[RMDB]
This 177-nucleotide RNA was probed chemically with DMS and 2A3.
The reactions ran in a buffer of 150 mM KOAc, 10 mM MgCl2 and 150 mM bicine (pH 8.5), at 24 C.

RNA sequence: GGGAACGACUCGAGUAGAGUCGAAAAGUGCCGGAGCGGUAGUCACAUAGAUUAGAAUACCUGCAUAUCACGCAGGAGGACGCGAGUCAGCGUCACGACCGAGCCGAAGAGUGAUAGUGACUAUCAGAAAUAUAAAUAUAUUCGUAUAUUUAUAUUUAAAAGAAACAACAACAACAAC
Reactivity to DMS in 0.01 (KOAc 150mM, MgCl2 10mM, bicine 150mM(pH8.5), 24C), signal-to-noise 1, nucleotides 027 to 126: g000u000g020c000c020g000g000a160g010c090g010g080u000a010g000u010c010a040c030a140u040a090g010a040u010u050a140g010a170a100u030a060c010c010u000g000c020a190u040a050u040c190a040c020g040c010a040g010g010a140g000g000a040c010g000c010g010a080g020u000c160a080g030c040g010u000c030a060c040g000a070c050c060g000a090g000c010c010g010a120a140g010a150g010u000g000a040u010a020g000u000g020a050c000u000a000u020c010a110g010
Reactivity to 2A3 in 0.01 (KOAc 150mM, MgCl2 10mM, bicine 150mM(pH8.5), 24C), signal-to-noise 1, nucleotides 027 to 126: g090u020g050c010c000g050g120a030g030c070g010g000u030a000g000u010c040a000c010a060u190a050g080a110u090u200a160g100a300a060u150a290c000c000u030g000c000a080u100a080u210c050a000c050g000c010a000g010g000a000g030g000a000c010g030c010g010a020g300u150c030a020g010c010g010u010c000a020c040g010a030c020c020g020a000g000c030c000g010a050a020g080a050g030u090g010a050u040a160g010u010g000a000c000u010a000u010c020a030g060

Source information
2A3 adducts were read by reverse transcription with SuperScript II with manganese. DMS (dimethyl sulfate) methylates the pairing face of unpaired adenines and cytosines. The data come from the RNA Mapping Database (RMDB), library OK1LIB.